[RMDB]
RNA sequence: GGGAACGACUCGAGUAGAGUCGAAAACACAACGGCUCAGCCCUGAAAUUGGCUAUAUUACAAUACCCUGGGUCUAAAGAAAUGUUUAAACCUCAUAAUUGGAUGUCAGGCCAUUUGUAUUUUGAGGUCCUUCGAUUAUCUUCGGAUAAUCGAAGGAAAAAGAAACAACAACAACAAC
Reactivity to DMS in 0.01 (KOAc 150mM, MgCl2 10mM, bicine 150mM(pH8.5), 24C), signal-to-noise 2, nucleotides 027 to 126: c140a100c150a130a130c160g000g000c000u010c010a080g000c000c070c010u000g000a030a070a100u010u040g000g000c250u010a000u080a100u010u070a150c080a040a110u000a090c040c020c000u000g000g020g040u000c010u000a060a000a250g010a040a150a060u040g000u000u010u000a070a000a070c060c050u000c030a000u010a060a030u010u000g000g000a020u000g000u010c110a120g020g000c090c030a020u000u010u000g000u030a080u000u010u000u000g000a040g000g000
Reactivity to 2A3 in 0.01 (KOAc 150mM, MgCl2 10mM, bicine 150mM(pH8.5), 24C), signal-to-noise 2, nucleotides 027 to 126: c090a000c020a000a220c070g000g020c010u020c020a040g030c000c040c000u040g110a100a110a100u120u040g030g000c060u020a000u000a020u240u240a060c100a050a050u130a130c000c000c000u020g020g000g000u000c000u010a090a110a020g080a000a090a030u050g010u040u090u070a080a010a010c000c000u000c000a010u000a040a020u060u050g000g010a000u000g100u200c200a130g000g130c010c010a030u040u000u080g290u080a150u030u030u070u030g020a000g030g020

Structure probing data (DMS and 2A3) for a 177-nucleotide construct. Source: RMDB library OK1LIB, as collected in RNAgym. 2A3 adducts were read by reverse transcription with SuperScript II with manganese. Conditions: 150 mM KOAc, 10 mM MgCl2 and 150 mM bicine (pH 8.5), 24 C.